[RMDB]
RNA sequence: GGGAACGACUCGAGUAGAGUCGAAAAGGUCUGGGCUUCCUCAGGCAGUGCCCAGAAGCUAUACUGCCAUAGUGCUCCACCCCAAGGGUUCCUGAGUCCCAUCUCCCUGCAGGGUUGAGGGGCUGGGCUUCCUGUGGACUGGCUAUUGGGGUGUUUACACCCUAGUGCCAUUCGUGGCACUAGGGUGAAAAGAAACAACAACAACAAC
Reactivity to 2A3 in 0.01 (KOAc 150mM, MgCl2 10mM, bicine 150mM(pH8.5), 24C), signal-to-noise 1, nucleotides 027 to 156: g010g040u000c000u020g010g010g050c080u140u070c050c010u030c030a070g000g060c030a020g040u000g010c000c000c000a000g030a080a020g050c000u060a050u030a280c070u090g060c080c100a050u080a080g130u150g120c010u030c030c000a000c000c000c000c030a000a020g030g000g020u010u000c000c020u050g030a000g080u090c000c000c000a190u000c020u030c000c030c000u150g120c130a250g120g050g000u080u110g000a020g000g050g000g000c030u020g000g000g000c050u140u090c000c130u050g020u140g010g030a000c010u050g080g050c040u070a150u060u050g000g000g020g000u010g000u020u000u010a000